[RMDB]
RNA sequence: GGGAACGACUCGAGUAGAGUCGAAAACGGUGGCCGUGGGGCGGCGCACUGCGACCUCACCAGCGGCUUUCGAGCUUUGUUCGAUCAACCGGCCAGCAUGGUCGAGGAUGCAUUCGAGACCAUAUUCGAUUUUUGAAGGUUUCGACCUUCAAAAAUCAAAAGAAACAACAACAACAAC
Reactivity to 2A3 in 0.01 (KOAc 150mM, MgCl2 10mM, bicine 150mM(pH8.5), 24C), signal-to-noise 2, nucleotides 027 to 126: c000g040g020u000g030g010c000c000g010u060g020g000g010g050c040g000g000c030g020c040a240c170u150g030c020g080a300c000c000u000c020a090c000c000a020g050c020g030g040c000u040u000u030c020g010a010g000c000u150u300u300g030u060u020c010g000a030u050c060a040a050c010c000g030g000c030c000a070g030c080a130u050g000g000u010c030g000a010g020g020a010u090g010c020a110u020u060c020g010a000g040a060c030c020a020u030a140u170u140c060
Reactivity to DMS in 0.01 (KOAc 150mM, MgCl2 10mM, bicine 150mM(pH8.5), 24C), signal-to-noise 3, nucleotides 027 to 126: c060g000g020u000g000g020c030c030g020u010g010g030g000g020c300g000g000c020g020c030a100c170u000g010c010g020a140c000c020u000c040a120c010c000a110g020c030g000g000c030u000u000u000c010g010a010g000c030u010u000u010g030u000u000c000g010a040u000c220a140a090c140c060g020g010c020c040a110g020c120a020u000g020g010u000c010g010a150g000g000a050u000g000c160a090u010u010c010g010a300g010a090c030c020a020u000a140u000u000c140
The record gives the reactivity of an RNA of 177 nucleotides to 2A3 and DMS. For 2A3, 1,940 sequencing reads were counted. For DMS, 2,132 sequencing reads were counted.